[RMDB]
RNA sequence: GGGAACGACUCGAGUAGAGUCGAAAAAGAAUCUCCUUCGGGAGAUUCUGAACCACUAAGCUCAUUGCGGAUGACGACGAGGCAGCUCGUGUCGAGCAACCACCGAGAACAGGUUCGCCUGUUCUAAGUGUUCAUCAGAUUUCGAUCUGAUGAACACAAAAGAAACAACAACAACAAC
Reactivity to 2A3 in 0.01 (KOAc 150mM, MgCl2 10mM, bicine 150mM(pH8.5), 24C), signal-to-noise 3, nucleotides 027 to 126: a000g020a000a000u000c000u010c000c010u010u060c120g080g010g000a000g000a000u000u010c000u000g000a000a000c010c000a030c100u110a070a010g030c020u020c080a080u080u200g010c040g090g050a090u190g020a050c110g050a000c020g020a030g040g080c080a100g050c050u010c010g030u040g030u050c020g030a020g000c000a000a050c010c050a060c020c070g110a010g000a040a000c000a000g000g030u040u060c160g050c050c000u000g020u020u010c000u000a070a030
Reactivity to DMS in 0.01 (KOAc 150mM, MgCl2 10mM, bicine 150mM(pH8.5), 24C), signal-to-noise 3, nucleotides 027 to 126: a020g000a020a010u000c000u000c000c000u000u000c140g020g040g010a000g000a000u000u000c010u000g000a090a190c040c010a090c190u020a090a090g010c060u010c120a150u000u010g020c060g000g000a100u010g000a060c050g030a030c030g010a050g000g010c300a070g010c020u010c010g010u000g000u000c020g010a120g020c030a080a100c120c080a060c100c090g000a030g000a020a010c010a010g000g000u000u010c250g010c010c010u000g000u000u000c000u000a010a090
Chemical mapping of a 177-nucleotide RNA with 2A3 and DMS. The reactions ran in a buffer of 150 mM KOAc, 10 mM MgCl2 and 150 mM bicine (pH 8.5), at 24 C. The data come from the RNA Mapping Database (RMDB), library M2PK50. DMS adducts were read by reverse transcription with MarathonRT.